RNA sequence: GGGAACGACUCGAGUAGAGUCGAAAAGACAGACGCUGGGUUGCCUCCCCACCUCGGUAGUGGCGAGGAUCGUACUGAAGCGCGCACGGUACGGGAGCCACAAACGAGAGGGCAACCUGUGCUGAAGCGCGCACGGCAACCGAAAGGUGCGAAGGAAGCGUAUAGUCAGGUUCGCCUGACUAUACGCAAAAGAAACAACAACAACAAC
Reactivity to 2A3 in 0.01 (KOAc 150mM, MgCl2 10mM, bicine 150mM(pH8.5), 24C), signal-to-noise 2, nucleotides 027 to 156: g060a040c060a030g060a040c040g020c050u040g000g020g010u020u010g010c020c000u080c050c020c040c010a070c000c020u060c030g030g020u130a040g020u060g080g090c000g000a090g030g030a030u020c110g030u130a080c040u150g070a180a060g000c020g000c000g000c000a020c030g000g040u010a000c000g000g000g000a000g000c030c000a070c020a070a220a050c120g060a080g040a200g100g060g000c030a070a090c000c000u000g020u000g000c030u020g030a120a010g000c000g000c000g000c050a000c000g000g020c010a040a010c010c010g040a040a030a010g020g040u070g020c110g140a060a020g130g020a180a040

Structure probing data (2A3) for a 207-nucleotide construct. Source: RMDB library RNAMAK, as collected in RNAgym. Values are in units of 0.01, from 0 to 300, in steps of 10. Conditions: 150 mM KOAc, 10 mM MgCl2 and 150 mM bicine (pH 8.5), 24 C.